[RMDB]
RNA sequence: GGGAACGACUCGAGUAGAGUCGAAAAUGAGGUUAGGCCAUAAAAGGCCAGAUCGUACUGCUUCUUACAUCUGGAAAAGCAGUAUUAAAUCAAUCAGGUUAGUUAUAUUGAAGAGCCUUGAGCUAUGGCAGACAAUAUAAUGAACUACAAAUAAUAGCAACCCUUAGUGCUUCGGCACUAAGGGUUGAAAAGAAACAACAACAACAAC
Reactivity to 2A3 in 0.01 (KOAc 150mM, MgCl2 10mM, bicine 150mM(pH8.5), 24C), signal-to-noise 1, nucleotides 027 to 156: u120g030a000g000g200u120u160a020g030g000c030c000a010u180a300a140a030a050g000g000c010c000a000g010a010u050c020g000u000a000c000u000g000c000u010u010c030u080u180a010c070a190u070c090u220g080g000a000a010a000a100g000c000a000g030u000a000u000u110a000a010a010u080c100a000a120u040c100a070g010g000u040u070a040g000u070u000a000u010a010u000u050g110a150a090g030a040g200c000c000u030u050g010a000g010c110u130a040u230g030g000c000a010g000a030c000a010a010u000a000u000a030a030u050g060a060a040c010u070a010c070a100a050a000u190a070a100u110a190g040